Overview:
This 177-nucleotide RNA was probed chemically with 2A3 and DMS. Values are in units of 0.01, from 0 to 300, in steps of 10. For 2A3, 988 sequencing reads were counted. DMS (dimethyl sulfate) methylates the pairing face of unpaired adenines and cytosines. Values cover nucleotides 27 to 126. The reactions ran in a buffer of 150 mM KOAc, 10 mM MgCl2 and 150 mM bicine (pH 8.5), at 24 C.
RNA sequence: GGGAACGACUCGAGUAGAGUCGAAAAAGAAAAAGUGGAUAUUGAGAAUUCUCCUCAUGUUACUCUAGGAGCAUUCGGGGAUGGUUCAGGGGGCUAUACUUUGCUUCUCGGACGAGUUUUUAGCAGAGCUUAUACUCUCUUUCGAGAGAGUAUAAGCAAAAGAAACAACAACAACAAC
Reactivity to 2A3 in 0.01 (KOAc 150mM, MgCl2 10mM, bicine 150mM(pH8.5), 24C), signal-to-noise 1, nucleotides 027 to 126: a000g090a000a090a010a020a000g110u100g000g040a060u060a100u190u180g020a100g030a050a080u060u030c000u030c000c020u020c040a050u150g080u160u140a090c040u090c110u180a050g080g000a000g000c020a000u100u060c060g000g000g000g000a030u080g060g050u080u150c110a080g000g020g000g020g020c010u050a050u000a150c000u000u070u090g020c000u070u000c010u020c000g000g050a030c050g000a020g000u180u210u020u040u080a020g010c000a040g010a000
Reactivity to DMS in 0.01 (KOAc 150mM, MgCl2 10mM, bicine 150mM(pH8.5), 24C), signal-to-noise 3, nucleotides 027 to 126: a090g000a080a070a050a080a050g020u000g000g000a090u010a080u010u000g000a190g010a060a060u000u000c040u000c010c000u000c110a060u010g010u000u000a070c140u000c120u010a060g010g000a010g010c050a030u000u000c070g030g000g000g020a060u010g010g000u010u000c090a080g020g000g020g000g010c190u000a070u000a040c060u000u000u000g000c090u000u000c030u000c050g010g000a080c090g010a060g000u000u000u000u010u000a100g030c080a070g010a170